[RMDB]
RNA sequence: GGGAACGACUCGAGUAGAGUCGAAAAUGGUAUUUUCACUAACGGUAAGUCGUCCACAACUCCUCAAAUCGUGAAUUACACGGGUGCGGCUGAUUCUAUCGCCGCUGGUACGGGUCUGAUGGGCGCACGUAAUGGCCCAGUUCGCUGGGCCAUUACGAAAAGAAACAACAACAACAAC
Reactivity to DMS in 0.01 (KOAc 150mM, MgCl2 10mM, bicine 150mM(pH8.5), 24C), signal-to-noise 2, nucleotides 027 to 126: u020g000g000u000a300u000u000u010u010c100a050c100u000a060a040c060g010g000u000a030a030g020u020c000g040u030c010c010a030c050a050a090c020u000c010c060u010c080a070a120a050u020c030g010u000g000a190a160u000u000a130c000a010c000g010g020g000u000g000c010g000g030c000u060g040a000u000u020c300u000a070u010c000g030c010c040g010c020u000g000g010u000a090c250g000g000g010u000c060u000g000a080u000g030g000g010c000g010c000a090
Reactivity to 2A3 in 0.01 (KOAc 150mM, MgCl2 10mM, bicine 150mM(pH8.5), 24C), signal-to-noise 1, nucleotides 027 to 126: u040g060g000u140a130u030u110u020u150c130a070c060u100a120a040c030g000g000u030a020a030g070u030c030g020u000c000c000a010c000a010a060c000u040c000c010u070c000a060a100a070u120c010g000u010g060a140a140u210u210a160c010a000c020g090g000g040u060g000c010g020g000c040u130g050a040u280u050c100u190a090u050c010g000c000c000g000c010u000g010g010u010a010c030g000g020g030u050c110u000g030a200u000g030g000g010c000g000c000a000